[RMDB]
RNA sequence: GGGAACGACUCGAGUAGAGUCGAAAAGAUAUGGACGGAUAAGGCGAGGAUCUACAUGGAAGGGCAACAGCUGCUCGGAAACGAGCAGACAUGCCUGCAGUGUAGGGAGCCUUAUCCGUCCUAAGUCGAAACGGACUAACUUCGGUUAGUCCGUUUCAAAAGAAACAACAACAACAAC
Reactivity to DMS in 0.01 (KOAc 150mM, MgCl2 10mM, bicine 150mM(pH8.5), 24C), signal-to-noise 1, nucleotides 027 to 126: g000a100u010a300u000g000g000a010c000g030g000a000u000a000a020g000g080c000g070a040g020g010a020u000c000u000a010c020a010u010g000g030a300a170g000g010g010c040a020a050c300a200g000c010u030g010c000u020c000g000g000a080a120a240c000g000a030g010c010a010g000a030c100a220u000g000c010c000u010g000c300a250g000u020g000u000a000g000g000g000a040g060c000c010u000u000a000u010c000c010g020u000c000c000u020a000a070g000u010c070
An RNA of 177 nucleotides, treated with DMS and read out base by base. For DMS, 1,101 sequencing reads were counted. For DMS the reverse transcriptase was MarathonRT. It was measured as part of the RMDB library TTRINS.